[RMDB]
RNA sequence: GGGAACGACUCGAGUAGAGUCGAAAAGGGAGGUGGAGAUGCCAUGCCGACCCGAAGAGGAAAGAAGGACUCGGACGCGAACCCGUAAGGUGAAACUUUCACAUUUAUUGGGGAGUACACUCGAGGAGGAGAGCCUUGUUCGCAAGGCUCAAAAGAAACAACAACAACAAC
Reactivity to DMS in 0.01 (KOAc 150mM, MgCl2 10mM, bicine 150mM(pH8.5), 24C), signal-to-noise 5, nucleotides 027 to 129: g000g030g060a080g000g040u020g020g020a050g040a070u040g030c050c140a060u060g020c100c030g020a040c020c050c110g010a080a090g020a110g070g040a000a000a090g020a000a060g000g000a110c000u020c090g000g000a070c140g020c000g030a110a120c040c000c040g000u030a000a000g000g000u010g010a050a070a090c120u050u040u010c040a060c040a080u020u010u020a050u050u020g030g020g000g010a110g030u000a100c110a060c020u030c010g000a070g010g000a080g040g000a040
Reactivity to 2A3 in 0.01 (KOAc 150mM, MgCl2 10mM, bicine 150mM(pH8.5), 24C), signal-to-noise 5, nucleotides 027 to 129: g040g000g000a010g030g010u060g040g010a080g010a020u120g040c030c000a070u110g010c020c010g050a070c030c000c000g010a030a010g060a000g010g030a040a000a000g040a020a030g000g010a010c000u020c000g000g020a010c040g020c000g060a080a040c000c000c000g000u040a010a010g060g020u020g030a040a050a090c000u080u150u050c030a060c010a190u050u090u100a120u100u270g000g000g000g000a010g000u060a030c020a020c030u030c010g000a020g000g000a000g000g000a070

This 170-nucleotide RNA was probed chemically with DMS and 2A3.
The RNA was probed in 150 mM KOAc, 10 mM MgCl2 and 150 mM bicine (pH 8.5) at 24 C.
DMS adducts were read by reverse transcription with MarathonRT.
For 2A3 the reverse transcriptase was SuperScript II with manganese.